Background:
Chemical mapping of a 177-nucleotide RNA with 2A3. The RNA was probed in 150 mM KOAc, 10 mM MgCl2 and 150 mM bicine (pH 8.5) at 24 C.

RNA sequence: GGGAACGACUCGAGUAGAGUCGAAAAAGGAGAAAUAUCAGCACUUGUGGAGAUGGGGGUGGAGAUGGGGCACCAUGCUCCUUGGGAUGUUGAUGAUCUGUAGUGCUACAGAAAAAUUGUGGGUCACGCCCUCAAAUCGUUUCGACGAUUUGAGGGCAAAAGAAACAACAACAACAAC
Reactivity to 2A3 in 0.01 (KOAc 150mM, MgCl2 10mM, bicine 150mM(pH8.5), 24C), signal-to-noise 2, nucleotides 027 to 126: a010g100g010a050g060a030a100a030u260a020u050c000a070g020c000a000c010u030u000g040u130g100g020a100g000a010u070g000g000g000g000g020u090g110g010a050g020a140u170g040g090g000g050c050a020c120c000a190u300g080c010u000c000c000u000u000g080g000g000a070u020g000u120u000g000a120u020g020a070u010c010u030g010u080a000g000u030g170c160u030a000c050a000g170a050a150a000a000a000u020u000g000u110g020g020g000u100c030a000c030